[RMDB]
RNA sequence: GGGAACGACUCGAGUAGAGUCGAAAACGCAACACAGUGAGUGGACGGAACAAAUCCCCUUCCCACCUCCCCACUGUCCACUCACUGUCUUCCUAAUAGGAAAUAUAAAUCGGGGGUGGGAAGGGGAAUGGAGGAUACGCUUCGGCGUAUCCUCCAUAAAAGAAACAACAACAACAAC
Reactivity to 2A3 in 0.01 (KOAc 150mM, MgCl2 10mM, bicine 150mM(pH8.5), 24C), signal-to-noise 2, nucleotides 027 to 126: c140g030c080a220a000c000a010c000a100g000u000g030a000g010u000g010g010a070c050g000g000a110a000c000a050a020a100u110c010c000c000c000u000u020c000c000c000a000c000c000u040c060c020c000c000a140c070u070g000u020c000c000a000c030u000c000a000c000u000g000u010c000u030u040c000c000u030a050a140u060a100g160g090a060a120a010u300a020u120a070a180a080u180c030g000g000g040g000g000u000g010g030g000a000a000g000g000g000g000a000
This 177-nucleotide RNA was probed chemically with 2A3. Conditions: 150 mM KOAc, 10 mM MgCl2 and 150 mM bicine (pH 8.5), 24 C. 2A3 adducts were read by reverse transcription with SuperScript II with manganese. It was measured as part of the RMDB library OK1LIB.